Chemical mapping of a 177-nucleotide RNA with DMS. The DMS profile rests on 870 reads.

[RMDB]
RNA sequence: GGGAACGACUCGAGUAGAGUCGAAAAGAUAUGGAAUUUGUAUCCUUGAGGGACUCUCUCGGAAACGAGAGUGUCCUGAUCGUGGCCGAGCAAAUUCCUAAGUCAAACUUUCCCUUCGGGGAAAGAACGAACAUAACACGUUCGCGUGUUAUGUUCGAAAAGAAACAACAACAACAAC
Reactivity to DMS in 0.01 (KOAc 150mM, MgCl2 10mM, bicine 150mM(pH8.5), 24C), signal-to-noise 1, nucleotides 027 to 126: g000a030u000a300u000g010g000a030a000u000u010u000g010u000a190u000c010c060u000u010g010a230g000g000g000a010c010u000c000u000c000u010c010g000g000a040a140a100c010g000a000g000a000g030u000g010u000c000c010u010g020a080u010c070g010u000g020g010c300c210g020a200g000c010a000a000a010u000u000c000c000u000a010a140g000u000c030a090a090a090c000u000u000u000c000c000c000u010u010c210g000g000g000g000a000a000a010g020a040a210

It was measured as part of the RMDB library TTRDEL. Conditions: 150 mM KOAc, 10 mM MgCl2 and 150 mM bicine (pH 8.5), 24 C. Reactivities are given for positions 27 through 126.